[RMDB]
RNA sequence: GGGAACGACUCGAGUAGAGUCGAAAAGCGGCCCCACCACACCCUGAACCGCCUGAGCUUCUGACUGCAUGGAAUAUUCACAGGACUGCAGUGUGAGAAGGCAGCACCGCCCCGGCGCCCGCGAGGAUCUAGUAUCUCCAUUCGUGGAGAUACUAGAAAAAGAAACAACAACAACAAC
Reactivity to DMS in 0.01 (KOAc 150mM, MgCl2 10mM, bicine 150mM(pH8.5), 24C), signal-to-noise 4, nucleotides 027 to 126: g020c060g030g010c040c000c030c030a090c070c050a070c080a080c040c020c020u000g020a100a090c060c060g000c050c030u010g000a080g010c020u000u000c040u000g010a050c020u010g000c010a030u010g020g010a160a120u000a100u000u010c110a110c160a080g000g010a180c090u010g000c020a020g000u000g020u010g020a040g010a060a070g010g020c040a040g010c020a080c060c050g000c020c030c010c020g010g020c050g000c020c010c040g020c080g000a050g000g000a170
Reactivity to 2A3 in 0.01 (KOAc 150mM, MgCl2 10mM, bicine 150mM(pH8.5), 24C), signal-to-noise 2, nucleotides 027 to 126: g060c050g000g020c040c030c030c000a000c050c000a000c000a010c000c000c000u030g060a040a050c050c030g040c000c030u060g050a040g090c000u060u030c010u040g140a080c030u030g000c010a050u130g050g050a100a060u130a130u200u200c090a100c050a130g060g080a040c060u040g010c020a010g050u040g000u030g060a060g000a000a020g050g000c000a010g010c000a020c010c020g040c010c010c030c020g060g020c040g050c000c000c000g040c030g030a040g050g020a020